An RNA of 177 nucleotides, treated with 2A3 and DMS and read out base by base. Values are in units of 0.01, from 0 to 300, in steps of 10. The DMS profile rests on 3,522 reads. Values cover nucleotides 27 to 126.

[RMDB]
RNA sequence: GGGAACGACUCGAGUAGAGUCGAAAAGGGAAAUCUUGAAUUGUCUAGUGCUGAGUUAGCAAUUAAUUCUGCCCAAUUGUCCAUAAAUUCUAACCAUUCAGAAGGUAAAUUGUUCUGCUUCGAGGCAUGUCAAUCUGUAUUUCGAUACAGAUUGACAAAAAGAAACAACAACAACAAC
Reactivity to 2A3 in 0.01 (KOAc 150mM, MgCl2 10mM, bicine 150mM(pH8.5), 24C), signal-to-noise 2, nucleotides 027 to 126: g020g000g050a060a080a010u110c080u120u080g060a110a060u100u020g050u130c020u020a030g040u030g150c050u040g050a020g090u030u010a010g000c040a040a000u020u070a020a070u000u130c080u060g030c010c020c010a020a120u120u090g040u020c000c000a040u110a130a170a030u140u050c040u070a020a060c000c020a090u060u070c050a130g090a120a060g090g050u110a030a050a140u190u110g060u090u050c010u000g010c040u110u080c130g020a060g070g000c030a000
Reactivity to DMS in 0.01 (KOAc 150mM, MgCl2 10mM, bicine 150mM(pH8.5), 24C), signal-to-noise 4, nucleotides 027 to 126: g010g010g000a090a050a080u010c110u010u000g000a120a050u000u000g010u010c040u000a050g010u010g010c110u010g010a140g010u000u000a020g000c050a040a040u000u000a060a130u000u000c050u000g010c010c000c020a070a120u010u000g020u000c040c030a080u000a050a050a120u010u010c070u010a060a100c080c050a050u000u000c070a120g010a080a060g000g000u000a050a060a160u010u000g010u000u000c050u000g000c050u000u000c110g020a090g010g020c110a110